RNA sequence: GGGAACGACUCGAGUAGAGUCGAAAACGCAAAGCUGCAGCGCGGCGCUCUGGAGGCCUUGCCCCGCGCACUGCUCUUUACAUGGCCCGACGUGUGGGCACUUCGCGGGCAGUGCUGCGGCCUCGUGAAACUGCCCCUAAGUUCGCUUAGGGGCAAAGUUCACUAUAACCUUCGGGUUAUAGUGAACAAAAGAAACAACAACAACAAC
Reactivity to DMS in 0.01 (KOAc 150mM, MgCl2 10mM, bicine 150mM(pH8.5), 24C), signal-to-noise 1, nucleotides 027 to 156: c040g040c040a060a040a070g010c020u020g030c040a040g010c020g050c050g060g040c080g020c020u000c030u000g020g000a140g020g030c050c050u020u000g010c000c030c000c010g050c060g030c050a050c020u000g020c000u000c050u030u010u010a160c060a130u000g030g030c060c020c050g010a100c150g030u010g060u020g030g000g030c000a030c030u030u000c000g030c280g000g020g080c030a050g020u000g030c040u000g000c000g010g090c020c000u010c060g000u000g000a080a020a060c060u000g020c010c000c000c000u000a030a050g000u000u010c300g040c020u000u000a050g020g010g040g000c010a010a000a010
Reactivity to 2A3 in 0.01 (KOAc 150mM, MgCl2 10mM, bicine 150mM(pH8.5), 24C), signal-to-noise 3, nucleotides 027 to 156: c050g000c000a020a020a040g000c000u060g010c040a020g060c010g000c000g220g030c030g050c020u060c080u120g180g030a040g020g000c040c030u060u100g030c000c000c000c010g000c000g000c020a010c040u040g000c000u020c020u090u200u110a090c060a100u100g050g000c030c030c030g100a210c080g070u070g010u170g020g000g000c020a070c040u030u030c020g000c030g010g000g000c000a020g010u010g010c020u020g010c010g000g000c000c000u010c000g000u010g010a070a090a010c050u040g000c000c000c000c000u010a000a000g010u050u100c110g060c120u000u000a010g000g000g010g000c000a000a000a000
An RNA of 207 nucleotides, treated with DMS and 2A3 and read out base by base.
The DMS profile rests on 2,589 reads.
Conditions: 150 mM KOAc, 10 mM MgCl2 and 150 mM bicine (pH 8.5), 24 C.